An RNA of 177 nucleotides, treated with 2A3 and DMS and read out base by base. For 2A3, 7,199 sequencing reads were counted. Conditions: 150 mM KOAc, 10 mM MgCl2 and 150 mM bicine (pH 8.5), 24 C.
RNA sequence: GGGAACGACUCGAGUAGAGUCGAAAAGAUAUGGACCUCGAAGCGAGGGCCAUAUAUUCGGAAACGAAUAUGACCUACCCACCGCUUCAGGUCCUAAGUCAAAGAAUCCUAGUUCGCUAGGAUUCAAGAUAAUUUACCACUUCGGUGGUAAAUUAUCAAAAGAAACAACAACAACAAC
Reactivity to 2A3 in 0.01 (KOAc 150mM, MgCl2 10mM, bicine 150mM(pH8.5), 24C), signal-to-noise 3, nucleotides 027 to 126: g020a010u040a020u100g000g010a000c020c010u080c260g000a000a010g000c010g020a110g000g040g000c010c020a030u050a010u000a000u120u020c000g000g030a010a060a050c020g000a010a000u020a010u040g060a070c000c030u080a110c070c060c040a130c150c040g020c000u010u010c010a000g010g000u030c000c000u000a030a000g000u010c030a080a060a170g010a010a000u000c000c000u000a000g020u010u070c300g020c140u000a000g020g000a000u000u000c000a000a010
Reactivity to DMS in 0.01 (KOAc 150mM, MgCl2 10mM, bicine 150mM(pH8.5), 24C), signal-to-noise 4, nucleotides 027 to 126: g000a040u000a300u010g010g010a010c000c000u000c170g020a010a020g010c020g000a100g030g000g030c030c050a030u000a020u000a040u010u000c000g000g000a110a090a150c000g010a030a020u000a010u000g010a050c060c020u000a120c070c060c120a300c120c000g000c010u000u000c010a020g000g010u000c000c010u010a000a040g000u000c040a100a120a140g010a010a010u000c000c000u000a010g000u000u010c260g020c000u000a000g000g000a000u000u000c000a040a080